[RMDB]
RNA sequence: GGGAACGACUCGAGUAGAGUCGAAAAGAGGCGAAAUAAUUCCCAUCUCCUCUGUACGGCCGGAGAUGGGUAUGGCCGUACUAAUAAGCCUCAUAGUGACGAGAGUCACGAAUUCUGGAUAGCCUUUGGUAGUCGGCUAUCCUAUGACUACCGUAGACCCGAUUAUGGUAUUCGUACCAUAAUCGGGAAAAGAAACAACAACAACAAC
Reactivity to 2A3 in 0.01 (KOAc 150mM, MgCl2 10mM, bicine 150mM(pH8.5), 24C), signal-to-noise 3, nucleotides 027 to 156: g000a000g020g000c010g070a060a100a060u200a040a060u110u050c000c000c000a010u010c030u010c010c010u110c090u050g080u100a030c070g040g000c010c040g010g040a080g000a050u080g040g010g000u020a030u050g020g000c020c000g010u020a000c000u020a010a160u060a140a000g000c000c000u020c010a060u120a040g020u030g000a000c020g000a020g000a020g090u010c000a000c000g010a030a030u170u050c040u090g020g020a030u020a040g000c000c000u060u060u130g090g010u070a070g050u060c010g000g000c010u000a020u030c000c000u010a040u040g030a020c010u020a020c010c030g040u050a040g070a080
Reactivity to DMS in 0.01 (KOAc 150mM, MgCl2 10mM, bicine 150mM(pH8.5), 24C), signal-to-noise 2, nucleotides 027 to 156: g000a020g040g030c050g010a050a160a100u010a150a270u010u000c000c000c000a080u000c000u000c020c010u000c060u010g060u000a050c040g000g010c010c000g050g010a070g000a070u030g010g020g010u000a000u000g000g000c010c060g050u000a070c060u000a100a120u010a070a300g000c010c000u000c040a140u000a240g030u000g000a010c010g000a190g000a300g020u000c030a030c010g020a090a110u000u020c140u000g020g020a140u000a060g000c000c010u020u000u010g030g000u000a070g040u000c100g030g010c000u000a030u000c030c000u000a020u010g030a040c030u000a020c030c010g030u000a130g000a290
Source information:
The record gives the reactivity of an RNA of 207 nucleotides to 2A3 and DMS. 2A3 adducts were read by reverse transcription with SuperScript II with manganese. It was measured as part of the RMDB library OK3TST. In probing experiments dimethyl sulfate is read out at A N1 and C N3, which are open when not base-paired. DMS adducts were read by reverse transcription with MarathonRT. The RNA was probed in 150 mM KOAc, 10 mM MgCl2 and 150 mM bicine (pH 8.5) at 24 C.